[RMDB]
RNA sequence: GGGAACGACUCGAGUAGAGUCGAAAAAAGUUGAAGUUCAAAGAGGUCUGUAAAACUACUACUGGUAUACCUGAAUACAACUUUAUCAUCUACGACUCAUCAGAUCGUGGCCAGGAAAGUUUAGCUAGGUUUAAUAACUGUUCGCAGUUAUUAAACCAAAAGAAACAACAACAACAAC
Reactivity to DMS in 0.01 (KOAc 150mM, MgCl2 10mM, bicine 150mM(pH8.5), 24C), signal-to-noise 2, nucleotides 027 to 126: a020a050g020u020u010g000a080a090g000u000u000c040a080a160a200g010a090g000g020u000c140u020g010u000a050a060a080a080c150u000a030c060u000a090c150u000g000g020u000a040u000a020c030c030u000g010a080a030u010a110c130a040a010c010u000u000u000a040u000c090a060u000c120u000a150c030g000a030c030u000c020a100u000c080a070g000a130u000c020g000u000g010g000c010c030a110g000g010a120a070a060g020u010u010u000a040g030c060u000a090
Reactivity to 2A3 in 0.01 (KOAc 150mM, MgCl2 10mM, bicine 150mM(pH8.5), 24C), signal-to-noise 2, nucleotides 027 to 126: a010a000g010u020u020g050a150a040g000u020u000c020a030a170a000g230a030g010g030u050c090u150g180u250a060a110a180a040c030u100a010c010u040a060c030u150g090g000u090a050u030a110c010c010u010g000a050a020u050a040c030a000a000c000u010u020u010a090u080c030a040u060c010u100a120c020g000a010c010u000c040a040u020c010a030g020a040u010c000g000u030g080g180c000c010a040g040g110a120a130a070g010u020u080u050a030g020c020u070a040